Chemical mapping of a 177-nucleotide RNA with 2A3 and DMS. 2A3 adducts were read by reverse transcription with SuperScript II with manganese. For 2A3, 1,526 sequencing reads were counted. The data come from the RNA Mapping Database (RMDB), library M2PK50. For DMS the reverse transcriptase was MarathonRT.

[RMDB]
RNA sequence: GGGAACGACUCGAGUAGAGUCGAAAAAGUCUACUUUUCGAAGUAGACUGUGCUCCCACUUGAUGGAGGUCUCACCGUGUCAUUGCCCACGACACUCGGGCGUAAUAGAUUGGUUCGCCAAUCUAAAAGCUCACCAUGUAUUCGUACAUGGUGAGCUAAAAGAAACAACAACAACAAC
Reactivity to 2A3 in 0.01 (KOAc 150mM, MgCl2 10mM, bicine 150mM(pH8.5), 24C), signal-to-noise 2, nucleotides 027 to 126: a000g000u000c000u000a000c040u040u010u050u180c280g040a000a010g010u000a010g010a000c010u000g000u050g060c040u020c000c010c000a050c070u120u140g090a080u170g050g030a020g110g050u000c010u030c060a050c040c090g050u010g040u050c020a100u010u190g040c000c010c010a060c030g050a010c010a000c020u050c040g010g010g060c000g020u020a110a020u010a030g030a030u000u000g000g050u060u010c120g010c060c010a000a010u000c000u010a000a070a030
Reactivity to DMS in 0.01 (KOAc 150mM, MgCl2 10mM, bicine 150mM(pH8.5), 24C), signal-to-noise 3, nucleotides 027 to 126: a020g010u000c000u000a020c000u000u000u000u010c180g020a020a000g020u000a010g000a000c000u000g010u010g030c130u000c010c000c020a090c170u010u000g030a100u000g010g010a070g080g000u000c030u000c030a110c070c070g030u010g020u000c010a240u000u000g000c020c010c040a140c120g020a070c060a050c040u000c140g000g010g020c020g000u000a070a100u000a010g000a010u020u000g010g000u000u000c180g030c010c000a010a000u000c010u000a040a020a090